Source: RMDB library M2PK50, as collected in RNAgym. Structure probing data (DMS and 2A3) for a 177-nucleotide construct. For 2A3, 2,753 sequencing reads were counted. For 2A3 the reverse transcriptase was SuperScript II with manganese.

RNA sequence: GGGAACGACUCGAGUAGAGUCGAAAAGCUCCCAGGUUCGCCUGGGAGCAAAUAAGAAGCGAGCAAAGGGUAAGGUAGGGAUGCUCGCAUACCCACCACCCAAAACCGACUAGUUCGCUAGUCGGAACAGUACAUUCACGUUCGCGUGAAUGUACUGAAAAGAAACAACAACAACAAC
Reactivity to DMS in 0.01 (KOAc 150mM, MgCl2 10mM, bicine 150mM(pH8.5), 24C), signal-to-noise 2, nucleotides 027 to 126: g000c000u000c000c000c020a000g000g020u000u000c240g030c000c000u000g000g010g020a030g000c000a000a000a030u000a140a120g020a160a070g000c030g010a050g030c030a050a140a150g000g000g010u010a080a060g000g010u000a040g000g000g010a120u000g010c000u000c120g020c010a040u000a040c010c000c010a130c070c060a100c000c020c020a060a070a050a150c020c000g000a020c000u000a020g000u000u010c140g020c010u020a020g000u010c010g010g010a030a040
Reactivity to 2A3 in 0.01 (KOAc 150mM, MgCl2 10mM, bicine 150mM(pH8.5), 24C), signal-to-noise 2, nucleotides 027 to 126: g000c000u000c000c000c000a010g060g000u060u070c210g070c100c000u000g000g000g010a000g000c000a010a000a000u010a000a020g100a060a000g020c030g020a010g000c060a090a050a190g000g020g060u130a090a070g030g050u080a100g100g030g000a010u020g000c010u050c030g080c000a010u070a070c010c000c010a000c000c030a040c000c020c000a040a030a050a070c000c000g000a000c000u010a000g020u050u030c120g000c080u000a010g000u000c000g010g000a020a000